Structure probing data (2A3 and DMS) for a 177-nucleotide construct. For DMS the reverse transcriptase was MarathonRT. The reactions ran in a buffer of 150 mM KOAc, 10 mM MgCl2 and 150 mM bicine (pH 8.5), at 24 C. 2A3 adducts were read by reverse transcription with SuperScript II with manganese. For 2A3, 4,329 sequencing reads were counted. The data come from the RNA Mapping Database (RMDB), library 15KREP.
[RMDB]
RNA sequence: GGGAACGACUCGAGUAGAGUCGAAAAAUGUGGCACCAAUGUGCCUCUACAAUUAGGAUUUUCAACUGGUGUGAACUUUGUUGUUCAGCCAGUUGGUGUUGUAGACACUGAGUGGGGUAACAUGUUAGAUAGUUUAGAUCUUCGGAUCUAAACUAUCAAAAGAAACAACAACAACAAC
Reactivity to 2A3 in 0.01 (KOAc 150mM, MgCl2 10mM, bicine 150mM(pH8.5), 24C), signal-to-noise 4, nucleotides 027 to 126: a000u050g000u010g050g010c040a010c040c030a020a050u100g000u000g030c000c020u010c000u010a010c000a050a020u160u140a110g210g020a130u110u120u060u150c010a000a010c000u010g000g030u150g060u040g130a010a000c010u060u110u200g250u300u090g000u180u080c000a010g010c000c000a000g000u000u000g000g000u010g010u000u000g000u000a010g000a000c010a010c030u060g030a060g130u090g000g030g030g020u000a040a020c010a020u030g080u080u050a030
Reactivity to DMS in 0.01 (KOAc 150mM, MgCl2 10mM, bicine 150mM(pH8.5), 24C), signal-to-noise 4, nucleotides 027 to 126: a040u000g010u010g000g020c020a040c000c060a070a110u010g010u000g000c120c090u010c010u000a020c010a010a020u000u000a100g030g010a190u010u000u010u010c010a010a010c010u000g000g020u000g000u010g010a010a010c000u000u010u020g000u010u000g000u000u000c000a300g000c000c000a000g010u000u000g000g000u010g010u000u000g010u000a010g000a040c050a030c030u000g010a120g030u010g010g000g000g010u010a070a040c040a020u010g000u000u000a120